[RMDB]
RNA sequence: GGGAACGACUCGAGUAGAGUCGAAAAGAAAAGCACGGCAAGCACAUGAAGCACAUGAAGCAGUACAAGCAGUACAAGCUCAUGAAGCACUACAAGCAGUAGAAGCAGCCGAAGCACAUGAAAAAAAGGCUGUAUAAAUGUUCGCAUUUAUACAGCCAAAAGAAACAACAACAACAAC
Reactivity to 2A3 in 0.01 (KOAc 150mM, MgCl2 10mM, bicine 150mM(pH8.5), 24C), signal-to-noise 1, nucleotides 027 to 126: g060a010a120a000a000g010c020a010c020g030g030c060a150a060g030c010a050c010a140u130g120a130a000g000c010a000c000a010u030g020a090a040g000c050a000g000u010a010c000a020a230g080c050a080g060u010a010c020a060a100g000c010u000c010a000u010g000a070a000g040c020a000c010u050a020c010a090a070g130c070a030g040u020a030g000a150a000g000c010a030g020c010c000g010a050a000g030c020a010c000a070u110g070a150a080a020a000a000a040a000
Reactivity to DMS in 0.01 (KOAc 150mM, MgCl2 10mM, bicine 150mM(pH8.5), 24C), signal-to-noise 1, nucleotides 027 to 126: g000a080a050a130a020g000c070a270c070g000g020c030a120a100g000c070a100c140a080u000g020a100a160g010c010a050c010a000u000g000a040a020g040c010a250g000u010a060c050a090a140g040c220a100g040u000a000c050a050a130g050c040u000c040a040u010g000a090a150g020c000a120c080u000a010c060a050a060g010c070a110g010u000a070g000a020a070g010c030a170g000c000c030g000a050a190g000c020a070c230a040u000g010a000a000a010a040a050a100a210
Chemical mapping of a 177-nucleotide RNA with 2A3 and DMS. For DMS the reverse transcriptase was MarathonRT.